[RMDB]
RNA sequence: GGGAACGACUCGAGUAGAGUCGAAAAGGUACACCUUGUAUAAAGGUUGCUGCUAUGCAGUCUAAACUUACAGAUCUUAAAUGCACAUCUGUGGUUCUCCUCUCUGUGCUCCAACAGUUACACUUAGACUAGAGUGUUGGUUCGCCAACACUCUAGUAAAAGAAACAACAACAACAAC
Reactivity to DMS in 0.01 (KOAc 150mM, MgCl2 10mM, bicine 150mM(pH8.5), 24C), signal-to-noise 2, nucleotides 027 to 126: g000g000u010a050c130a020c000c000u000u010g000u030a110u010a110a040a020g000g000u000u000g020c070u010g020c030u010a100u010g010c010a030g010u000c080u020a030a050a080c070u010u010a080c040a020g000a030u010c110u010u000a080a080a110u020g010c170a060c170a050u000c040u010g030u010g010g000u000u000c030u000c040c010u000c050u010c060u010g040u000g010c060u030c030c040a030a080c170a080g010u000u010a100c270a050c030u000u000a060g010
Reactivity to 2A3 in 0.01 (KOAc 150mM, MgCl2 10mM, bicine 150mM(pH8.5), 24C), signal-to-noise 2, nucleotides 027 to 126: g080g040u100a050c040a010c050c010u000u010g040u030a200u140a180a020a000g020g000u010u030g000c010u010g000c020u140a080u300g020c020a010g020u030c020u120a090a030a040c010u080u100a010c030a020g040a050u020c020u090u200a110a120a090u240g020c070a020c000a070u010c020u000g020u010g020g000u000u020c010u020c000c000u000c000u000c010u000g040u040g020c000u050c010c020a040a080c040a050g030u100u050a040c090a010c030u030u040a000g030